[RMDB]
RNA sequence: GGGAACGACUCGAGUAGAGUCGAAAAUGGUGGCGUGCACCUGCUGUCCCAGCUACUCGGGAAGCUGAGGCGGGAGCAUCGCUUGAGCACAGGAGGUCAAGGCUGCAGGGAGCUAUGACUGUGCCACUGCACUCUGGCCUGGGCAACAGAGGAAGACGAACUAUUCUCCGUUCGCGGAGAAUAGUUCAAAAGAAACAACAACAACAAC
Reactivity to 2A3 in 0.01 (KOAc 150mM, MgCl2 10mM, bicine 150mM(pH8.5), 24C), signal-to-noise 2, nucleotides 027 to 156: u140g000g010u040g000g020c020g040u040g000c020a000c030c010u020g010c030u030g130u160c030c030c000a000g000c040u080a080c020u070c080g030g100g000a060a020g000c020u020g030a010g090g000c000g010g010g010a070g010c040a030u130c060g020c010u050u080g020a000g000c020a010c020a020g120g030a080g030g020u030c040a080a040g060g030c030u020g000c030a000g030g060g000a070g000c040u070a050u250g050a050c070u060g030u100g070c020c020a050c030u030g000c120a030c010u030c000u060g040g000c000c000u010g000g000g000c060a080a010c010a030g010a010g020g060a010a000g040a040c110
Source: RMDB library OK3TST, as collected in RNAgym. Chemical mapping of a 207-nucleotide RNA with 2A3. For 2A3 the reverse transcriptase was SuperScript II with manganese. Values cover nucleotides 27 to 156.